[RMDB]
RNA sequence: GGGAACGACUCGAGUAGAGUCGAAAAACGGCUAGCUACGGCCAGCCGAAUCGGGCCAAAGGCAGUCGCCCGACGACACAGGCGAUCGUUCGCCCAAGCGCUGCACACGACUAUACGUAGUCGUGAAUUGAUCACGCAACCUUCGGGUUGCGUGAAACGAUGGGUCAUAGUUCGCUAUGACCCAUCGAAAAGAAACAACAACAACAAC
Reactivity to 2A3 in 0.01 (KOAc 150mM, MgCl2 10mM, bicine 150mM(pH8.5), 24C), signal-to-noise 1, nucleotides 027 to 156: a000c010g010g010c010u010a000g000c000u010a050c120g050g000c000c000a000g000c010c000g010a010a080u040c040g000g020g020c040c050a110a130a130g110g030c030a010g010u050c040g020c000c010c010g000a010c010g010a000c000a010c030a100g120g000c040g010a010u040c060g090u080u050c030g170c010c000c000a040a030g030c050g010c060u020g030c050a000c010a000c000g020a020c020u020a000u030a140c270g130u000a000g010u020c000g000u000g000a000a000u070u160g080a010u050c000a000c000g000c000a000a010c000c000u000u040c150g060g000g010u000u000g000c000g000u000g000a000a000a000
Overview
Structure probing data (2A3) for a 207-nucleotide construct. Reactivities are given for positions 27 through 156.